The record gives the reactivity of an RNA of 177 nucleotides to DMS. It was measured as part of the RMDB library OK2TRN. Reactivities are given for positions 27 through 126.
RNA sequence: GGGAACGACUCGAGUAGAGUCGAAAAAAGCUGGGUAACAACGUAUCGAUUGGCGCUAACGCGGUGAUUGAGUCCGGCGUUGAACUGGGCGAUAACGUGAUUAUCGGUGCCGGUUGCUUCGUAGGUAGAAAGUUUUGGGAUUCGUCCCAAAACUUUCAAAAGAAACAACAACAACAAC
Reactivity to DMS in 0.01 (KOAc 150mM, MgCl2 10mM, bicine 150mM(pH8.5), 24C), signal-to-noise 1, nucleotides 027 to 126: a000a060g040c050u000g030g000g010u020a080a110c090a060a060c050g020u000a060u000c020g000a050u000u000g000g010c030g060c050u020a080a150c120g020c060g030g000u030g000a090u020u000g040a120g020u000c030c010g000g000c000g000u000u030g020a060a060c070u010g000g000g020c020g000a020u000a040a020c050g020u000g020a170u030u010a090u000c120g000g000u020g010c030c020g000g000u000u000g010c030u010u020c120g000u020a050g000g020u000a140